[RMDB]
RNA sequence: GGGAACGACUCGAGUAGAGUCGAAAACAUCGCGACUUCGGUCGCGAUGAAAGUUGUGCUCCCUCACGCAUAACAAAUCCCAAUCAGGGUAGGUGACUGCAAAACGACACGCCUUCGGGCGUGUCAAGCAAUGGAUUUGAUUCGUCAAAUCCAUUGCAAAAGAAACAACAACAACAAC
Reactivity to 2A3 in 0.01 (KOAc 150mM, MgCl2 10mM, bicine 150mM(pH8.5), 24C), signal-to-noise 1, nucleotides 027 to 126: c010a010u060c010g000c020g010a030c020u060u060c180g110g000u000c010g030c000g020a000u010g000a000a000a010g000u010u020g010u020g030c010u120c070c050c000u030c030a090c080g040c010a010u010a030a010c000a030a090a040u070c030c010c000a020a050u150c080a090g000g050g140u080a030g010g120u110g060a070c090u150g000c100a000a030a030a140c120g000a000c010a000c000g030c000c030u040u100c120g010g010g050c020g120u000g000u000c000a000a010
Reactivity to DMS in 0.01 (KOAc 150mM, MgCl2 10mM, bicine 150mM(pH8.5), 24C), signal-to-noise 3, nucleotides 027 to 126: c020a020u000c010g010c000g000a000c000u000u030c210g040g020u000c000g000c020g000a000u000g000a010a120a090g010u000u000g030u000g000c010u000c040c030c020u000c090a070c130g000c020a020u000a030a020c020a090a090a100u000c020c000c000a160a120u020c160a100g000g010g030u000a040g000g020u010g030a100c100u010g000c140a070a050a070a130c190g000a020c000a000c010g030c000c000u000u020c150g020g000g020c010g010u000g000u000c000a010a030